[RMDB]
RNA sequence: GGGAACGACUCGAGUAGAGUCGAAAAUCCCGUACCUUCGGAAGAAGGGAUGCCUGCUCCGGAACGGAGCAGGUCGCAGUGACUCGGAAGCUCGGACUGUCUAGUAACAACAUAGGUGACCGCAAAUCCGCAAGGACUCGUACGGUCACUGAAUCCUUCUAUGGCACAAGUUCGCUUGUGCCAUAGAAAAAGAAACAACAACAACAAC
Reactivity to 2A3 in 0.01 (KOAc 150mM, MgCl2 10mM, bicine 150mM(pH8.5), 24C), signal-to-noise 1, nucleotides 027 to 156: u000c020c000c020g000u160a180c010c000u020u010c070g000g220a050a040g000a000a030g080g000g000a010u130g000c000c000u000g010c000u000c000c010g170g230a150a130c150g030g000a010g000c020a000g000g000u010c010g000c020a050g020u000g080a040c050u030c100g020g030a030a000g020c030u020c090g000g010a010c010u030g040u070c050u110a090g080u150a150a030c050a000a040c040a140u080a100g000g090u000g000a000c000c000g000c030a050a110a050u020c000c010g000c060a070a130g000g000a010c020u020c150g090u090a070c030g000g010u000c000a000c000u000g000a000a020u000c000c010u000